[RMDB]
RNA sequence: GGGAACGACUCGAGUAGAGUCGAAAAGAUUCGGCGGCCCUGGCAUGAGGCCGAAACGAAGGCACGUACCCCUUCGAAUGGCGUCGGGGAGUCAGCGGCUAUAUAUGCGCCUAAUGCUGGCAUCCGGGAGAACCCUCAUCCUUCGGGAUGAGGGUAACAAUAUUGAGCAGUUCGCUGCUCAAUAUUGAAAAGAAACAACAACAACAAC
Reactivity to DMS in 0.01 (KOAc 150mM, MgCl2 10mM, bicine 150mM(pH8.5), 24C), signal-to-noise 3, nucleotides 027 to 156: g010a210u010u000c030g000g000c020g000g000c010c000c020u000g040g000c070a130u020g000a100g020g020c000c010g010a020a050a100c050g020a060a080g000g000c050a120c090g000u010a230c050c040c010c000u010u000c030g000a120a150u020g010g010c050g010u000c040g000g000g010g020a110g020u020c030a050g040c040g020g000c020u000a100u010a110u010a070u010g010c060g010c020c010u000a070a100u000g010c010u000g010g020c020a050u000c000c020g000g010g020a180g000a090a080c010c000c010u000c010a030u000c000c000u000u030c300g070g040g010a010u000g000a020g010g000g000u000a000a040
Reactivity to 2A3 in 0.01 (KOAc 150mM, MgCl2 10mM, bicine 150mM(pH8.5), 24C), signal-to-noise 5, nucleotides 027 to 156: g060a070u090u060c020g020g020c030g020g040c020c050c000u050g030g020c060a090u120g040a040g090g000c030c040g040a010a010a010c030g020a020a030g040g020c090a020c180g110u220a120c030c010c000c010u010u000c020g090a130a110u150g060g030c040g050u030c010g020g000g010g010a050g030u050c010a010g000c020g050g000c040u010a010u020a020u010a000u250g110c070g020c000c000u090a150a050u190g020c000u000g010g000c000a070u030c010c000g010g010g020a100g040a040a030c000c000c000u000c010a010u000c000c000u040u080c140g090g000g000a000u000g000a000g000g000g000u000a000a000
This 207-nucleotide RNA was probed chemically with DMS and 2A3. The 2A3 profile rests on 3,405 reads. Reactivities are given for positions 27 through 156.